[RMDB]
About this RNA:
Chemical mapping of a 177-nucleotide RNA with DMS and 2A3. High 2A3 reactivity points to a flexible backbone, as in loops and unpaired stretches. It was measured as part of the RMDB library VIROID. Reactivities are given for positions 27 through 126. The reactions ran in a buffer of 150 mM KOAc, 10 mM MgCl2 and 150 mM bicine (pH 8.5), at 24 C. For 2A3 the reverse transcriptase was SuperScript II with manganese.
RNA sequence: GGGAACGACUCGAGUAGAGUCGAAAACAAAUUCCGUGACCGUGUUAAGGCCAGCAUUGAAGAGCGUACCUAGCUGCGUUUCAACCUGCAUGGGUUGGGGCGGCUUAGCGGAUUAAGGAAAGUUCUAACCUGGAAUGAAGUUCGCUUCAUUCCAGGUAAAAGAAACAACAACAACAAC
Reactivity to DMS in 0.01 (KOAc 150mM, MgCl2 10mM, bicine 150mM(pH8.5), 24C), signal-to-noise 2, nucleotides 027 to 126: c070a100a060a170u000u000c020c000g010u010g010a080c010c030g010u000g020u000u000a060a060g010g000c250c010a130g000c020a060u000u000g000a120a140g010a080g010c050g000u010a110c040c040u010a060g040c040u000g000c000g000u010u000u000c010a000a030c000c020u000g020c270a090u020g000g030g000u000u000g000g010g000g010c000g000g000c060u000u000a050g000c000g000g000a060u000u000a090a100g000g010a040a020a120g000u000u010c010u000a050
Reactivity to 2A3 in 0.01 (KOAc 150mM, MgCl2 10mM, bicine 150mM(pH8.5), 24C), signal-to-noise 2, nucleotides 027 to 126: c020a000a150a030u090u000c020c010g050u050g010a020c000c010g000u030g070u170u210a030a000g010g010c040c020a030g010c060a070u030u230g100a100a080g020a040g060c020g000u080a060c020c030u050a040g000c080u010g000c010g020u020u020u070c000a020a010c000c000u080g120c170a120u300g020g010g020u020u010g010g000g010g020c000g020g010c020u000u020a010g000c010g000g050a060u090u050a070a030g030g020a030a010a050g000u000u030c020u030a000